Conditions: 150 mM KOAc, 10 mM MgCl2 and 150 mM bicine (pH 8.5), 24 C.
Chemical mapping of a 177-nucleotide RNA with 2A3 and DMS.
The data come from the RNA Mapping Database (RMDB), library TTRDES.
RNA sequence: GGGAACGACUCGAGUAGAGUCGAAAAGAUAUGGACUGUACUGCAGCUAGAAACCAUGUCGGAAACGACAUUGUUUCUUGGACCUGUUACAGUCCUAAGUCAAAAGAUCAGCGUUCGCGCUGAUCAACUUGAGAGCAGAGUUCGCUCUGCUCUCAAGAAAAGAAACAACAACAACAAC
Reactivity to 2A3 in 0.01 (KOAc 150mM, MgCl2 10mM, bicine 150mM(pH8.5), 24C), signal-to-noise 2, nucleotides 027 to 126: g040a010u030a060u100g010g000a020c010u010g000u010a000c180u280g090c050a040g030c070u300a090g000a000a000a000c000c000a020u000g020u050c020g040g040a040a000a010c000g000a000c000a000u030u010g000u020u010u040c020u030u140g110g040a060c020c020u010g010u090u010a000c010a000g000u000c000c000u000a020a010g000u010c010a070a140a080a080g030a010u010c000a000g040c000g070u160u200c300g010c040g040c100u000g000a000u000c000a000a030
Reactivity to DMS in 0.01 (KOAc 150mM, MgCl2 10mM, bicine 150mM(pH8.5), 24C), signal-to-noise 2, nucleotides 027 to 126: g010a010u010a300u020g000g010a020c010u010g000u000a010c300u010g000c040a030g010c080u000a020g010a020a000a020c010c060a000u000g000u000c000g000g020a070a060a220c000g000a010c000a000u000u000g000u000u000u000c000u000u000g040g000a090c300c010u000g000u010u000a010c000a000g000u000c000c020u000a020a120g000u010c030a100a120a160a130g010a000u000c010a020g020c010g010u010u000c300g000c060g030c020u000g000a000u000c000a020a070